Structure probing data (DMS) for a 177-nucleotide construct. Conditions: 150 mM KOAc, 10 mM MgCl2 and 150 mM bicine (pH 8.5), 24 C. It was measured as part of the RMDB library TTRINS.
RNA sequence: GGGAACGACUCGAGUAGAGUCGAAAAGAUAUGGACCGUGAUAGCUAGCUUCCGUUGGUAUAAGGAGGGAUCGGAAACGAUCCCUCCUUAUACCAACGGGAGCUUGGACCUAUACGGUCCUAAGUCACUCAUUAAUAAGGUUCGCCUUAUUAAUGAGAAAAGAAACAACAACAACAAC
Reactivity to DMS in 0.01 (KOAc 150mM, MgCl2 10mM, bicine 150mM(pH8.5), 24C), signal-to-noise 2, nucleotides 027 to 126: g020a060u000a300u010g000g020a000c000c000g010u000g010a030u000a010g000c030u000a010g020c020u000u000c010c000g010u020u000g000g000u000a000u020a020a020g000g000a080g030g040g030a020u000c000g020g000a130a120a210c030g000a030u000c000c000c010u000c000c000u000u000a000u000a000c020c010a000a010c020g010g000g000a000g010c000u000u000g040g000a100c300c020u000a020u060a020c020g000g010u000c000c000u000a010a060g000u000c040a260